[RMDB]
RNA sequence: GGGAACGACUCGAGUAGAGUCGAAAAGGCGUUGGGUUUGAUGUUUACCGGCCCCCUUUCUGAUGCGAUAGGCCGAAAAUCAGUCAUGGUCGUGGCGUUGCUAUUGGCCGCGGUUUGCACAAUAGUAAUAGGUAUUUUAUUUCGAUAAAAUACCUAUAAAAGAAACAACAACAACAAC
Reactivity to 2A3 in 0.01 (KOAc 150mM, MgCl2 10mM, bicine 150mM(pH8.5), 24C), signal-to-noise 1, nucleotides 027 to 126: g040g010c040g000u050u070g000g040g000u000u030u170g060a030u070g010u040u160u030a150c050c000g100g060c010c000c000c010c000u040u100u000c040u040g010a040u110g000c000g060a040u040a110g020g040c010c000g050a090a040a010a070u060c040a050g110u030c010a100u120g030g050u100c050g020u070g010g010c040g090u070u050g010c010u000a030u090u110g030g000c050c010g030c040g060g110u070u080u060g030c020a020c000a100a040u050a060g080u130a090
Reactivity to DMS in 0.01 (KOAc 150mM, MgCl2 10mM, bicine 150mM(pH8.5), 24C), signal-to-noise 4, nucleotides 027 to 126: g010g010c130g030u000u000g010g000g020u000u010u000g020a060u000g010u010u010u010a130c110c030g010g000c040c030c040c050c030u000u000u010c040u010g020a080u000g010c070g010a090u000a090g010g010c020c020g000a040a070a080a050u010c050a060g010u010c070a060u010g010g010u000c070g020u000g010g010c040g010u000u000g000c010u010a060u000u010g010g000c060c070g020c080g000g010u000u010u000g020c040a070c040a030a040u010a050g010u010a080
Background:
Structure probing data (2A3 and DMS) for a 177-nucleotide construct. Reactivities are rounded to 0.1 and cut off at 0 and 3. The data come from the RNA Mapping Database (RMDB), library OK2TST. Values cover nucleotides 27 to 126. The 2A3 profile rests on 810 reads. The RNA was probed in 150 mM KOAc, 10 mM MgCl2 and 150 mM bicine (pH 8.5) at 24 C.